[RMDB]
RNA sequence: GGGAACGACUCGAGUAGAGUCGAAAACAAGUUCGUGCUUGCGAGUUACACGUAGGGCGAGGGGUGGGCGAAAGUUGCCAUGAGACCGUAACUUUCGUAGUCAUUGAUAAAGGGGCAGGUCUCGCUCAAAAGACGUUGGUCUUCGGACCAACGUCAACAUCCCGAUACUGUUCGCAGUAUCGGGAUGAAAAGAAACAACAACAACAAC
Reactivity to 2A3 in 0.01 (KOAc 150mM, MgCl2 10mM, bicine 150mM(pH8.5), 24C), signal-to-noise 3, nucleotides 027 to 156: c030a020a060g050u140u080c010g020u090g100c030u080u040g020c030g050a060g070u130u080a050c080a000c060g030u070a040g020g030g000c100g040a120g000g000g010g080u300g020g010g000c000g000a020a000a000g010u010u030g010c040c070a150u200g000a000g000a010c000c030g010u000a000a000c000u010u000u000c030g000u030a040g040u060c080a140u080u190g070a050u110a090a060a030g000g000g000g000c040a030g010g000u010c000u000c000g000c020u150c000a070a110a000a010g020a020c000g000u000u000g000g000u010c040u060u030c180g030g000a000c000c000a000a010c000g000u000c000a000a000
Source information: Chemical mapping of a 207-nucleotide RNA with 2A3. The RNA was probed in 150 mM KOAc, 10 mM MgCl2 and 150 mM bicine (pH 8.5) at 24 C. The 2A3 profile rests on 1,723 reads. The data come from the RNA Mapping Database (RMDB), library M2RFPK.